[RMDB]
RNA sequence: GGGAACGACUCGAGUAGAGUCGAAAAUUAAGCUCCAUGACAUUAGGUCUAAUAUUUUCUCUGUAUAACUUGUUGAUAGCCCUUGAUCUUCCGUUGCCUAGCGCAUGGGAGCAACAGAGCGUGUUACCCUACAUGCUAGUUUCGACUAGCAUGUAGGAAAAGAAACAACAACAACAAC
Reactivity to DMS in 0.01 (KOAc 150mM, MgCl2 10mM, bicine 150mM(pH8.5), 24C), signal-to-noise 3, nucleotides 027 to 126: u000u000a100a130g000c040u000c030c040a100u000g000a090c080a120u000u010a070g010g010u000c040u000a050a050u010a100u000u000u000u000c020u010c020u010g020u000a110u000a070a090c130u000u010g010u020u000g000a100u010a140g000c020c020c010u000u000g000a200u010c020u000u000c020c020g000u000u000g030c000c020u000a160g010c050g020c020a000u000g010g020g010a040g000c070a050a090c090a020g030a040g030c040g020u000g010u000u000a130c150
Reactivity to 2A3 in 0.01 (KOAc 150mM, MgCl2 10mM, bicine 150mM(pH8.5), 24C), signal-to-noise 2, nucleotides 027 to 126: u030u040a080a030g010c020u030c040c000a070u100g070a050c040a050u170u200a040g120g000u000c060u070a080a100u060a180u130u090u150u000c050u000c020u040g110u080a110u040a240a080c020u060u130g020u150u060g170a060u090a080g020c040c000c000u010u040g040a070u060c000u020u010c030c020g050u010u040g020c000c000u030a070g010c010g000c030a000u040g030g030g000a010g000c010a040a000c020a000g050a020g000c060g010u120g060u070u060a070c020